Structure probing data (2A3 and DMS) for a 177-nucleotide construct. Conditions: 150 mM KOAc, 10 mM MgCl2 and 150 mM bicine (pH 8.5), 24 C. For DMS the reverse transcriptase was MarathonRT.

[RMDB]
RNA sequence: GGGAACGACUCGAGUAGAGUCGAAAAUUUUCGUCAAAACAUACCAAAACUCUCUCACUUUUAAAAGUUCAAGUUAACGGAAGUAAGGGGAUCGAUCUGUUCCAAUUGUACUCAAACACACUCUCUCGUACAAAAAGUCGUUCGCGACUUUUUGUACAAAAGAAACAACAACAACAAC
Reactivity to 2A3 in 0.01 (KOAc 150mM, MgCl2 10mM, bicine 150mM(pH8.5), 24C), signal-to-noise 4, nucleotides 027 to 126: u050u030u010u060c040g040u040c040a030a080a120a050c020a040u150a070c040c050a020a100a060a100c010u010c000u000c000u000c060a040c020u060u080u110u100a070a280a010a050g020u060u070c080a110a060g030u070u140a060a010c020g030g030a070a010g000u060a050a080g000g030g010g000a030u050c020g020a020u000c010u050g010u000u040c020c010a050a060u040u100g040u040a010c040u020c060a070a120a040c060a010c020a020c060u010c000u000c000u030c060
Reactivity to DMS in 0.01 (KOAc 150mM, MgCl2 10mM, bicine 150mM(pH8.5), 24C), signal-to-noise 1, nucleotides 027 to 126: u010u040u030u020c070g000u080c030a190a140a110a120c080a040u010a180c020c050a070a000a040a030c010u000c070u010c030u010c010a040c090u040u050u040u070a010a130a080a130g000u000u000c100a000a070g000u000u010a040a030c050g010g000a010a020g000u010a040a000g060g020g010g000a010u000c000g090a030u000c070u000g010u000u000c000c000a080a160u000u030g000u060a000c050u020c000a110a030a030c030a130c040a010c130u000c030u000c000u000c300